[RMDB]
RNA sequence: GGGAACGACUCGAGUAGAGUCGAAAACUGUGAAAGGAGGAUAAUAACACCCAUAUCUUAGGAUUGUCCUUCUGGUGUGUUAUCAAACAGCAACACUUUUUGUGGUCCCCAAAACAUCAUUCAUAUAACUAUUGAUAUGGUUGCUGUUCAAGCAUAAGGACUAGUUUUACUUCGGUAAAACUAGUCCAAAAGAAACAACAACAACAAC
Reactivity to DMS in 0.01 (KOAc 150mM, MgCl2 10mM, bicine 150mM(pH8.5), 24C), signal-to-noise 1, nucleotides 027 to 156: c040u010g000u010g000a140a110a100g050g000a020g010g020a080u010a070a060u000a120a080c070a160c030c010c020a050u000a060u020c060u010u000a080g030g010a300u000u000g010u000c000c010u000u010c060u010g030g010u000g070u000g020u000u000a070u010c010a140a110a050c020a140g020c030a010a050c010a060c010u000u000u000u000u000g030u010g000g040u000c000c010c030c050a060a060a100a040c030a080u000c050a100u000u000c060a060u000a080u010a060a110c110u000a160u000u040g010a030u000a030u000g020g020u000u000g040c000u000g000u000u000c090a080a140g000c030a080u020a110a300
Reactivity to 2A3 in 0.01 (KOAc 150mM, MgCl2 10mM, bicine 150mM(pH8.5), 24C), signal-to-noise 2, nucleotides 027 to 156: c030u050g000u100g180a120a040a050g050g000a000g000g100a000u040a030a000u070a160a030c030a020c050c030c020a080u070a030u150c140u060u140a000g040g020a030u010u090g000u000c000c000u010u000c000u000g000g070u090g010u000g020u000u010a060u090c060a030a040a050c000a020g020c030a070a040c030a060c080u040u030u010u160u190g070u120g100g070u060c060c000c000c030a000a030a050a020c040a010u070c010a030u060u170c060a020u220a010u090a190a160c030u130a060u090u110g020a040u000a030u110g010g010u030u030g000c000u000g030u030u070c030a070a040g020c000a030u100a160a030
The record gives the reactivity of an RNA of 207 nucleotides to DMS and 2A3. The 2A3 profile rests on 673 reads. Reactivities are rounded to 0.1 and cut off at 0 and 3. For 2A3 the reverse transcriptase was SuperScript II with manganese. The data come from the RNA Mapping Database (RMDB), library OK3TST. In probing experiments dimethyl sulfate is read out at A N1 and C N3, which are open when not base-paired. The reactions ran in a buffer of 150 mM KOAc, 10 mM MgCl2 and 150 mM bicine (pH 8.5), at 24 C.